[RMDB]
RNA sequence: GGGAACGACUCGAGUAGAGUCGAAAAGUCAGUAAGGACGACUGGGUCCUCCUACAGCUAGUCCCCGUUCGCGGUACCCUGCAGCAAAGCCUGUCGUGUCUGCGCUUUAAGCACGGCCGGGCGAGUCGCGCCACGGCGCGGACAUUCGUCGCGCUGACUACUACUUGAACUUCGGUUCAAGUAGUAGAAAAGAAACAACAACAACAAC
Reactivity to 2A3 in 0.01 (KOAc 150mM, MgCl2 10mM, bicine 150mM(pH8.5), 24C), signal-to-noise 2, nucleotides 027 to 156: g050u030c050a010g020u110a120a100g060g030a010c040g020a040c050u110g040g010g050u040c010c010u050c010c010u080a080c040a020g030c040u090a010g060u070c000c020c010c000g090u060u130c060g000c040g010g010u050a080c030c000c030u020g030c020a020g000c030a120a070a090g010c010c020u050g000u070c040g010u020g010u030c000u020g020c040g010c050u030u060u110a040a020g000c020a010c010g020g000c020c030g120g000g000c020g000a020g010u000c000g000c000g020c040c010a020c050g050g000c000g000c000g000g000a010c010a040u120u070c050g020u000c010g010c000g010c050u010g050a020
Reactivity to DMS in 0.01 (KOAc 150mM, MgCl2 10mM, bicine 150mM(pH8.5), 24C), signal-to-noise 2, nucleotides 027 to 156: g020u010c070a130g030u010a080a040g030g030a090c010g010a130c140u000g030g000g000u000c030c030u000c020c010u010a050c010a040g030c010u000a130g010u000c020c030c000c060g010u000u010c040g010c050g020g030u010a040c030c020c000u000g000c020a080g010c080a070a120a150g010c000c000u010g030u000c080g060u000g000u000c010u000g030c120g000c110u000u010u010a200a060g000c050a020c030g020g010c000c030g000g010g010c100g020a070g000u000c020g010c040g020c000c000a110c300g000g000c010g000c000g070g020a000c020a090u010u010c060g010u000c020g020c120g000c010u010g010a200
This 207-nucleotide RNA was probed chemically with 2A3 and DMS.
2A3 adducts were read by reverse transcription with SuperScript II with manganese.
The data come from the RNA Mapping Database (RMDB), library OK3TST.
For DMS the reverse transcriptase was MarathonRT.